Structure probing data (2A3 and DMS) for a 177-nucleotide construct. Conditions: 150 mM KOAc, 10 mM MgCl2 and 150 mM bicine (pH 8.5), 24 C. DMS adducts were read by reverse transcription with MarathonRT.
RNA sequence: GGGAACGACUCGAGUAGAGUCGAAAAGCGACGAUCCAUAGGAGUAUGACGUGUGACGGUCUCUCUUAAACUGAGUCGCAUAACAGCUAGUUUAAGAUUGUCAUACGUCUUAUACUAGCUGAGGAUAGUAAGUCUUUGUAUUCGUACAAGGACUUACAAAAGAAACAACAACAACAAC
Reactivity to 2A3 in 0.01 (KOAc 150mM, MgCl2 10mM, bicine 150mM(pH8.5), 24C), signal-to-noise 9, nucleotides 027 to 126: g020c010g030a030c010g010a050u030c010c010a030u050a020g010g000a010g010u100a070u260g020a000c010g070u140g060u090g120a050c060g080g020u010c020u000c000u000c000u030u030a060a060a030c040u050g060a010g030u030c010g000c020a000u070a040a020c000a000g000c000u000a000g000u010u000u010a000a000g000a010u040u130g070u120c040a050u060a080c030g000u000c000u000u000a000u000a000c000u000a000g010c000u000g000a000g020g040a030u050a080
Reactivity to DMS in 0.01 (KOAc 150mM, MgCl2 10mM, bicine 150mM(pH8.5), 24C), signal-to-noise 9, nucleotides 027 to 126: g000c020g010a020c030g010a090u000c020c050a210u010a040g000g010a010g010u030a020u030g010a020c010g030u030g010u030g010a100c090g010g010u000c030u010c050u000c020u000u000a010a050a070c120u000g010a300g010u000c030g030c040a100u040a070a120c040a030g000c010u000a000g000u000u000u000a000a000g000a000u000u030g000u010c160a120u040a110c130g010u000c000u010u000a010u000a010c000u000a020g010c000u000g000a050g000g010a100u030a100